The record gives the reactivity of an RNA of 177 nucleotides to DMS and 2A3. The reactions ran in a buffer of 150 mM KOAc, 10 mM MgCl2 and 150 mM bicine (pH 8.5), at 24 C.
RNA sequence: GGGAACGACUCGAGUAGAGUCGAAAACAACUAACCCACGAAUCUAAGACUGCCUUUGCUUCGUGAGCUAAUUCUACCUUUUGUUUCAAUUCAAAGGCUUCGCUUUCAAGUUCAACAGUUUAAAAACGAUAAAUCGAUCAUUCGUGAUCGAUUUAUCAAAAGAAACAACAACAACAAC
Reactivity to DMS in 0.01 (KOAc 150mM, MgCl2 10mM, bicine 150mM(pH8.5), 24C), signal-to-noise 3, nucleotides 027 to 126: c200a060a160c260u010a080a090c000c000c000a040c160g040a050a040u000c050u000a030a060g000a190c090u040g030c060c000u000u000u000g000c090u010u010c070g010u010g000a130g000c010u030a030a050u010u020c060u040a090c060c050u000u000u000u010g000u020u000u000c070a140a140u080u020c120a090a040a070g000g010c070u000u000c070g010c010u000u040u010c040a000a080g000u000u000c130a070a150c170a000g000u020u010u020a050a020a070a100a090c200
Reactivity to 2A3 in 0.01 (KOAc 150mM, MgCl2 10mM, bicine 150mM(pH8.5), 24C), signal-to-noise 9, nucleotides 027 to 126: c070a010a040c050u150a070a090c010c020c010a050c070g080a040a050u090c050u150a070a020g070a090c030u080g060c040c040u100u060u050g010c020u030u060c060g050u030g020a010g010c020u070a070a080u160u070c040u110a100c020c010u070u070u050u120g090u030u180u080c120a120a120u100u040c010a020a040a010g000g000c000u040u050c030g000c010u010u040u040c030a030a020g010u010u030c010a050a040c020a090g010u060u080u130a100a150a040a010a010c060
Source: RMDB library OK1LIB, as collected in RNAgym.